An RNA of 177 nucleotides, treated with DMS and 2A3 and read out base by base. Conditions: 150 mM KOAc, 10 mM MgCl2 and 150 mM bicine (pH 8.5), 24 C. For 2A3 the reverse transcriptase was SuperScript II with manganese. Source: RMDB library TTRDES, as collected in RNAgym.
[RMDB]
RNA sequence: GGGAACGACUCGAGUAGAGUCGAAAAGAUAUGGAUGUUCUGCAUUUCCGAAGAACUGCUUCGGAAACGAAGCAGGGAGGAGGGUGCAGAGACAUCCUAAGUCAAAGAUUGAACUUCGGUUCAAUCACUCAUUAGUUUUCUUCGGAAAACUAAUGAGAAAAGAAACAACAACAACAAC
Reactivity to DMS in 0.01 (KOAc 150mM, MgCl2 10mM, bicine 150mM(pH8.5), 24C), signal-to-noise 5, nucleotides 027 to 126: g010a060u010a300u010g000g010a010u000g010u000u000c000u000g010c000a020u000u020u020c000c010g000a150a190g010a230a230c020u000g000c000u000u000c000g000g000a090a070a140c010g020a000a010g010c000a010g010g000g010a140g020g010a160g010g010g010u000g020c000a020g000a090g010a030c000a010u000c000c000u010a010a110g000u010c050a090a140a110g010a020u000u000g000a020a010c000u000u020c300g030g000u000u000c000a000a000u000c000a190
Reactivity to 2A3 in 0.01 (KOAc 150mM, MgCl2 10mM, bicine 150mM(pH8.5), 24C), signal-to-noise 4, nucleotides 027 to 126: g040a020u090a060u200g010g000a000u000g000u020u020c000u010g000c000a010u040u180u060c030c020g150a260a050g000a050a040c000u010g010c010u020u000c000g050g000a060a040a030c010g000a010a010g000c010a000g020g000g020a030g020g030a030g070g120g030u020g000c000a000g030a020g020a010c000a000u010c000c000u020a120a010g040u020c050a100a040a150g010a010u000u000g000a000a010c010u060u130c300g130g000u000u000c000a000a010u000c000a050